[RMDB]
RNA sequence: GGGAACGACUCGAGUAGAGUCGAAAACUCAUUUUUGAGACAGCGAAUAAAAAGGUCAUAAGCCUCCAUCGGCAGCGGAUGGGAUGACGCUCCUAAAAACUUUGCAAUUUCCCGAAGCGGAAACUCCCUGAUCCCGUGGUUUCGACCACGGGAUCAGAAAAGAAACAACAACAACAAC
Reactivity to 2A3 in 0.01 (KOAc 150mM, MgCl2 10mM, bicine 150mM(pH8.5), 24C), signal-to-noise 1, nucleotides 027 to 126: c000u000c060a080u030u090u140u140u250g090a040g030a080c050a050g090c060g290a130a070u240a170a180a030a000a000g000g000u070c050a050u150a170a100g010c070c000u110c000c000a030u160c140g090g000c040a000g080c010g030g000a030u190g140g010g010a000u070g000a000c030g000c000u090c000c000u040a070a100a000a000a000c030u050u130u210g000c000a000a080u000u060u030c000c010c010g080a130a020g000c060g060g030a000a000a000c000u080c060c000
This 177-nucleotide RNA was probed chemically with 2A3. Conditions: 150 mM KOAc, 10 mM MgCl2 and 150 mM bicine (pH 8.5), 24 C. The 2A3 profile rests on 372 reads. Reactivities are given for positions 27 through 126.